Structure probing data (2A3) for a 207-nucleotide construct.
It was measured as part of the RMDB library RNAMAK.
Reactivities are given for positions 27 through 156.
For 2A3 the reverse transcriptase was SuperScript II with manganese.
RNA sequence: GGGAACGACUCGAGUAGAGUCGAAAAUAACCGUUCGCGGUUAAUUAAGAUAUGGAGCUGAACUACACGCGUAGCACCGUUGAAACGUGCUCGGAAACGAGCACGUGGAGGUGUCAAGCGUGCAGCUCCUAAGUCGCAAAAUGCCCUUCGGGGCAAACACACGAUCCAAGUUCGCUUGGAUCGUGUGAAAAGAAACAACAACAACAAC
Reactivity to 2A3 in 0.01 (KOAc 150mM, MgCl2 10mM, bicine 150mM(pH8.5), 24C), signal-to-noise 1, nucleotides 027 to 156: u030a010a010c010c000g000u050u080c240g000c010g040g030u040u040a050a070u090u110a200a000g000a000u010a000u050g000g000a010g000c010u000g000a050a000c040u190a070c300a010c000g040c010g020u080a000g000c000a000c010c010g100u110u030g000a010a010a000c000g010u000g020c000u010c000g000g000a020a020a000c000g000a000g000c000a010c000g000u000g000g000a000g010g000u020g010u020c010a030a030g000c000g000u010g010c000a000g020c000u000c000c000u000a000a000g000u000c000g000c030a070a080a080a120u070g000c000c000c000u010u050c230g010g000g000g020c020a000a030a000